[RMDB]
RNA sequence: GGGAACGACUCGAGUAGAGUCGAAAACAGUGGGUUGAUUUUCCUGGUGAAUCCCGGCCUUGUCCUCCGUCACAAGUGUGACAAGUGUCUCGAAAACGUGUUCGCUAUACCCACGUUACAGAUUGGGUCGACAAACGCUAUUCGUAGCGUUUGUCGAAAAAGAAACAACAACAACAAC
Reactivity to DMS in 0.01 (KOAc 150mM, MgCl2 10mM, bicine 150mM(pH8.5), 24C), signal-to-noise 2, nucleotides 027 to 126: c130a060g040u000g000g000g030u020u000g000a120u010u020u010u000c010c000u010g030g000u020g000a040a010u000c100c080c070g010g020c000c010u000u000g000u000c000c010u000c010c090g000u000c300a100c220a160a210g010u010g030u000g010a000c000a040a020g000u010g030u010c010u030c050g000a080a050a140a080c200g010u000g010u000u010c010g010c010u000a030u010a090c010c020c000a000c020g000u000u000a140c200a070g010a130u010u040g020g000g000
Reactivity to 2A3 in 0.01 (KOAc 150mM, MgCl2 10mM, bicine 150mM(pH8.5), 24C), signal-to-noise 2, nucleotides 027 to 126: c060a000g040u010g020g040g000u040u030g100a210u040u170u040u000c000c010u000g000g030u010g070a030a060u040c050c030c020g000g000c000c010u010u010g050u090c000c000u070c020c050g020u070c010a000c020a100a130g030u000g080u110g030a000c010a000a000g050u060g060u100c040u000c190g190a050a020a030a030c050g110u040g040u130u050c000g000c000u020a000u050a070c000c000c000a000c020g000u010u070a080c010a000g070a030u020u250g050g000g030